[RMDB]
RNA sequence: GGGAACGACUCGAGUAGAGUCGAAAACCAUAACAGUUCGCUGUUAUGGACUGUCGGAAUGCGGAAUAAUUAAUCGUCCGCUUACGAUUAAUUCCGACUAUAAAGCGUAACACUUCGGUGUUACGAAGGCUUUACAGGGAUUCGUCCCUGUAAAGCCAAAAGAAACAACAACAACAAC
Reactivity to DMS in 0.01 (KOAc 150mM, MgCl2 10mM, bicine 150mM(pH8.5), 24C), signal-to-noise 1, nucleotides 027 to 126: c040c000a010u000a010a010c000a010g040u000u010c190g050c000u030g040u000u000a000u010g010g020a070c120u030g000u000c000g010g000a040a030u000g000c040g000g000a040a070u000a050a200u010u010a060a050u000c160g000u000c060c040g000c040u000u000a010c160g020a080u000u000a160a050u000u000c000c000g000a040c080u010a060u010a050a090a060g010c010g010u000a030a000c000a000c000u000u010c300g010g010u000g010u000u000a000c010g010a040a060
Reactivity to 2A3 in 0.01 (KOAc 150mM, MgCl2 10mM, bicine 150mM(pH8.5), 24C), signal-to-noise 2, nucleotides 027 to 126: c000c010a010u000a000a000c000a010g040u100u140c150g040c080u000g000u030u000a010u000g030g030a050c050u030g010u020c010g020g030a060a020u080g000c000g030g060a010a080u150a110a120u200u200a100a070u090c110g060u000c020c030g080c030u000u110a020c030g030a030u000u070a020a010u010u000c000c000g030a000c000u040a060u050a210a070a030g110c010g000u000a000a000c000a020c030u020u100c240g060g000u040g020u000u000a000c000g000a020a010
Conditions: 150 mM KOAc, 10 mM MgCl2 and 150 mM bicine (pH 8.5), 24 C. An RNA of 177 nucleotides, treated with DMS and 2A3 and read out base by base. For DMS, 811 sequencing reads were counted. DMS adducts were read by reverse transcription with MarathonRT. The 2A3 profile rests on 1,427 reads.